[RMDB]
Source information: The record gives the reactivity of an RNA of 177 nucleotides to DMS and 2A3. The RNA was probed in 150 mM KOAc, 10 mM MgCl2 and 150 mM bicine (pH 8.5) at 24 C. For 2A3 the reverse transcriptase was SuperScript II with manganese.

RNA sequence: GGGAACGACUCGAGUAGAGUCGAAAAGUGUUCAGUUGCGGGCAUCCGUGCUUGCAUCCGCGCAAAUGGCGCGCGGCAGAAGAAUGUCCGUCAAGGGCAGUGAGCCCGGUAUCCGGUCCGCCACCCAAGCGUAUGAUUAGUUCGCUAAUCAUACGCUAAAAGAAACAACAACAACAAC
Reactivity to DMS in 0.01 (KOAc 150mM, MgCl2 10mM, bicine 150mM(pH8.5), 24C), signal-to-noise 4, nucleotides 027 to 126: g030u000g020u000u000c080a100g010u000u000g020c010g020g000g000c010a090u010c010c020g000u000g010c020u010u000g020c020a140u010c010c020g000c000g020c000a140a150a170u010g000g010c200g010c000g000c030g020g000c280a060g000a150a100g000a120a210u000g020u000c020c010g010u010c290a110a180g010g030g000c010a040g000u010g000a040g010c020c040c010g010g000u010a080u010c250c140g010g020u000c010c020g010c010c090a140c010c000c010a090
Reactivity to 2A3 in 0.01 (KOAc 150mM, MgCl2 10mM, bicine 150mM(pH8.5), 24C), signal-to-noise 2, nucleotides 027 to 126: g100u070g080u170u110c080a070g040u140u100g050c020g000g000g000c010a010u030c020c010g020u010g000c010u000u030g010c000a030u030c000c010g000c010g000c030a000a110a300u300g250g010c060g000c000g040c000g090g030c000a030g050a210a010g020a060a100u050g000u000c000c040g020u060c110a060a060g000g000g000c030a010g010u020g020a020g000c000c090c000g000g000u060a080u040c080c020g070g020u000c020c000g000c020c010a020c020c000c010a010